[RMDB]
RNA sequence: GGGAACGACUCGAGUAGAGUCGAAAAGAUAUGGACGUGAGUAGCUUUUGACGCUUGACACAUCGGAAACGAUGUGGAGAGCGAUAAGCUACCACGUCCUAAGUCAAAACCGCUCUUCGGAGCGGAACUUCUAGCUCCGGUUCGCCGGAGCUAGAAGAAAAGAAACAACAACAACAAC
Reactivity to DMS in 0.01 (KOAc 150mM, MgCl2 10mM, bicine 150mM(pH8.5), 24C), signal-to-noise 1, nucleotides 027 to 126: g020a050u000a300u000g000g050a000c000g000u000g000a140g030u000a000g000c000u000u000u000u010g020a220c120g020c000u010u000g020a300c000a020c020a000u000c000g010g020a170a100a240c020g020a030u000g040u020g000g000a300g000a020g010c000g030a100u000a010a000g010c000u000a010c000c000a010c000g000u000c000c000u020a000a120g000u000c040a060a020a090a170c020c010g000c030u000c000u000u020c130g010g000a020g030c010g040g000a010a060
Reactivity to 2A3 in 0.01 (KOAc 150mM, MgCl2 10mM, bicine 150mM(pH8.5), 24C), signal-to-noise 1, nucleotides 027 to 126: g070a020u080a040u110g000g000a000c000g010u000g070a300g070u060a000g000c000u170u140u140u190g270a120c170g000c000u000u010g010a020c000a000c000a000u000c000g000g020a020a060a020c010g010a000u020g000u030g020g040a020g020a000g000c000g000a010u030a020a000g000c000u000a000c010c000a000c020g000u000c000c000u000a000a000g000u000c000a000a000a100a140c020c010g000c010u030c010u030u090c300g130g000a010g010c060g020g020a000a000
An RNA of 177 nucleotides, treated with DMS and 2A3 and read out base by base.
For 2A3 the reverse transcriptase was SuperScript II with manganese.
2A3 is a SHAPE reagent: it acylates the 2'-hydroxyl of flexible nucleotides of all four kinds.